[RMDB]
RNA sequence: GGGAACGACUCGAGUAGAGUCGAAAACGUUAAUGACAUUUGUAUGUUUGAGAAUAAAACCACUUUGCCUACUAAUAUAGCUUUUGAACUCUAUGCUAAGCGUGCUGUACGCUCGCAUCCCGAUUUCACCAGAUACUAAGUUCGCUUAGUAUCUGGUAAAAGAAACAACAACAACAAC
Reactivity to DMS in 0.01 (KOAc 150mM, MgCl2 10mM, bicine 150mM(pH8.5), 24C), signal-to-noise 7, nucleotides 027 to 126: c100g010u000u010a040a100u000g000a050c040a030u010u010u010g010u010a050u000g000u000u000u010g010a140g010a110a070u010a050a070a060a070c050c110a080c060u000u000u000g010c010c020u000a080c070u000a070a060u000a090u010a060g010c040u000u000u010u000g000a060a070c050u000c040u000a030u000g010c050u000a070a090g010c040g010u000g000c110u000g010u000a050c070g010c010u000c100g000c050a120u000c000c000c010g000a160u000u000u000c090
Reactivity to 2A3 in 0.01 (KOAc 150mM, MgCl2 10mM, bicine 150mM(pH8.5), 24C), signal-to-noise 8, nucleotides 027 to 126: c030g010u050u080a080a040u130g060a030c030a080u090u120u150g130u090a080u050g050u000u060u120g070a080g030a090a070u120a120a090a020a020c020c010a030c020u040u030u040g000c000c010u030a050c010u020a090a120u110a040u030a090g020c010u030u080u020u080g020a040a020c010u000c010u030a030u070g020c010u030a050a020g010c010g040u020g030c040u080g040u060a010c050g000c010u010c000g000c000a040u010c010c010c010g050a110u030u040u050c030